[RMDB]
RNA sequence: GGGAACGACUCGAGUAGAGUCGAAAAGCGCGCUAUAUAGCGUAUGCGGCGAUACGCGCGUAUCGCAUAGCGGCGAUAGCGGCGUAUGCGAUAAUAGCGCGCGCGUAUUAUCGCGCGUAUGCGAUACGUCCCUAACAUCUUUCGAGAUGUUAGGGACAAAAGAAACAACAACAACAAC
Reactivity to 2A3 in 0.01 (KOAc 150mM, MgCl2 10mM, bicine 150mM(pH8.5), 24C), signal-to-noise 5, nucleotides 027 to 126: g040c050g000c010g000c060u020a020u020a020u130a230g040c010g010u010a030u050g040c030g060g010c010g030a020u020a040c020g040c010g000c030g040u040a030u040c010g000c050a040u060a090g300c070g070g010c030g130a170u100a100g060c080g050g000c010g040u010a000u000g000c010g020a010u050a120a110u130a100g080c060g000c000g000c000g000c000g020u020a070u130u060a040u070c000g000c000g000c000g060u070a020u050g000c000g010a010u020a100c090
Reactivity to DMS in 0.01 (KOAc 150mM, MgCl2 10mM, bicine 150mM(pH8.5), 24C), signal-to-noise 3, nucleotides 027 to 126: g000c060g010c020g010c020u000a030u000a120u020a100g010c000g010u000a020u000g010c010g030g020c050g010a110u010a030c010g010c040g020c070g010u010a020u010c050g000c010a150u000a040g020c010g000g020c010g010a100u010a060g000c020g010g010c000g020u000a010u000g000c010g000a020u000a100a070u000a100g020c160g010c000g000c010g000c030g000u000a050u000u010a030u000c020g010c000g000c000g020u010a010u010g000c000g010a070u010a070c300